An RNA of 177 nucleotides, treated with 2A3 and read out base by base. Source: RMDB library OK1LIB, as collected in RNAgym. Conditions: 150 mM KOAc, 10 mM MgCl2 and 150 mM bicine (pH 8.5), 24 C.
RNA sequence: GGGAACGACUCGAGUAGAGUCGAAAAUACAUUAAAUGAUUGUCAGCAACAAGUUGUACAAGCUGGGUUAGAAAAUGAUGUCACAUUUUUGGGCAAUGUCAUUAAUGCGAGUCAUUUAUUAUCACAACGGGCUUGUAUAGUUCGCUAUACAAGCCCGAAAAGAAACAACAACAACAAC
Reactivity to 2A3 in 0.01 (KOAc 150mM, MgCl2 10mM, bicine 150mM(pH8.5), 24C), signal-to-noise 2, nucleotides 027 to 126: u090a000c000a020u070u120a030a070a060u240g020a060u100u030g080u100c010a010g070c020a040a080c010a090a150g020u060u040g080u130a200c000a130a000g000c020u180g000g000g100u060u050a040g220a070a030a000a000u150g020a000u010g240u210c000a000c000a110u000u030u120u130u000g040g130g010c100a100a060u300g010u000c000a020u000u050a120a000u020g020c000g000a040g000u000c000a000u000u030u140a130u050u070a050u090c270a080c030a120a000